[RMDB]
Source information
Chemical mapping of a 177-nucleotide RNA with DMS and 2A3. Conditions: 150 mM KOAc, 10 mM MgCl2 and 150 mM bicine (pH 8.5), 24 C. The data come from the RNA Mapping Database (RMDB), library RFMREP. For DMS the reverse transcriptase was MarathonRT. Values cover nucleotides 27 to 126.
RNA sequence: GGGAACGACUCGAGUAGAGUCGAAAAUCUGAAAGUGUUCCAUAGGAACACAACAUUGAUUAAUCUUAUUUUUGGUCUCCGUGGCAGGGCCCCUGUGCUUGCGCAUGCCUUGCCACACAGUGUCAUCCUCCAACUUAUAGUUCGCUAUAAGUUGGAGAAAAGAAACAACAACAACAAC
Reactivity to DMS in 0.01 (KOAc 150mM, MgCl2 10mM, bicine 150mM(pH8.5), 24C), signal-to-noise 4, nucleotides 027 to 126: u000c010u000g010a080a120a160g030u000g020u000u010c000c010a200u000a200g020g010a010a010c000a010c000a100a170c120a120u010u000g000a050u000u010a100a140u000c040u000u000a100u000u000u000u000u000g010g000u010c020u010c160c210g030u000g000g000c010a020g000g000g000c000c010c060c000u000g010u020g000c020u000u000g020c020g030c000a010u020g000c010c000u010u000g010c010c010a010c000a000c120a070g010u010g000u000c080a120u000c120
Reactivity to 2A3 in 0.01 (KOAc 150mM, MgCl2 10mM, bicine 150mM(pH8.5), 24C), signal-to-noise 5, nucleotides 027 to 126: u010c020u010g060a090a060a040g000u000g020u000u010c010c020a110u180a240g040g000a000a000c010a000c010a040a050c020a090u110u190g030a050u080u130a120a090u070c040u060u160a190u250u160u040u060u080g060g000u040c030u000c090c070g000u000g000g000c000a010g000g000g010c010c000c010c000u010g000u020g020c040u110u100g010c010g000c010a010u210g000c000c000u000u000g000c000c000a000c000a000c000a010g110u130g030u010c030a060u020c010